[RMDB]
RNA sequence: GGGAACGACUCGAGUAGAGUCGAAAAUCAGUGGCAAAGGAAAAAUGUGGAAUGAACCUCAGAUGGAAAUUGCCAUGACAUCUUGGAGUUUAGAAAGUAAUAUAUAGCACACAUAUCAGAUAAUCAAUUGGCUCAUUGAUAGCCAGUCAGUUGGCUAGCAUUUAGCUCGAUUCGUCGAGCUAAAUGCAAAAGAAACAACAACAACAAC
Reactivity to 2A3 in 0.01 (KOAc 150mM, MgCl2 10mM, bicine 150mM(pH8.5), 24C), signal-to-noise 2, nucleotides 027 to 156: u050c030a040g030u020g010g000c010a040a120a150g040g050a090a030a010a010a020u080g000u030g070g010a050a120u180g010a120a040c000c000u010c030a010g070a050u010g000g040a060a020a120u040u080g000c000c000a020u030g030a010c010a070u050c000u050u090g080g000a060g030u050u080u150a030g060a010a050a000g020u030a020a040u010a050u110a030u040a150g040c030a010c010a000c050a000u090a050u170c020a040g050a130u100a060a050u090c020a010a060u070u050g020g000c010u010c030a070u060u150g010a060u060a010g000c010c000a010g010u090c090a010g020u030u050g020g000c040u040a010
An RNA of 207 nucleotides, treated with 2A3 and read out base by base. 2A3 adducts were read by reverse transcription with SuperScript II with manganese. Conditions: 150 mM KOAc, 10 mM MgCl2 and 150 mM bicine (pH 8.5), 24 C. Values cover nucleotides 27 to 156.